[RMDB]
RNA sequence: GGGAACGACUCGAGUAGAGUCGAAAACCGGUGAUUCGAUGGAGCGCCGCAAGGCGAGCCGAUGAAUUGCCGAGAAGCCUGGCUCGAAAUCGUCGACGCAUCGACGACGGUCCUGCCAUGAGACCGUGAGCGUAAUUAGGUUCGCCUAAUUACGCUCAAAAGAAACAACAACAACAAC
Reactivity to DMS in 0.01 (KOAc 150mM, MgCl2 10mM, bicine 150mM(pH8.5), 24C), signal-to-noise 1, nucleotides 027 to 126: c120c010g030g010u000g020a020u000u000c000g000a200u030g000g010a100g010c040g010c100c000g000c300a080a190g000g000c000g010a020g030c000c000g010a180u000g010a020a000u000u000g000c010c000g000a060g000a060a020g000c020c010u010g010g000c000u020c050g020a060a290a110u000c000g010u000c000g010a110c300g000c160a090u010c060g000a010c010g020a000c020g010g020u000c000c060u010g010c050c010a050u000g010a070g100a090c020c000g030u010
Reactivity to 2A3 in 0.01 (KOAc 150mM, MgCl2 10mM, bicine 150mM(pH8.5), 24C), signal-to-noise 1, nucleotides 027 to 126: c030c000g000g020u010g000a020u010u020c030g000a020u270g010g000a020g030c000g000c030c010g050c060a040a050g030g000c000g010a010g010c020c000g000a020u110g000a000a010u010u020g000c010c010g020a040g040a010a000g010c000c030u030g050g000c010u020c070g030a060a060a080u030c010g020u010c010g010a040c060g000c220a140u170c040g020a020c000g020a030c010g050g090u040c010c030u050g030c050c050a110u090g010a020g000a060c000c000g040u040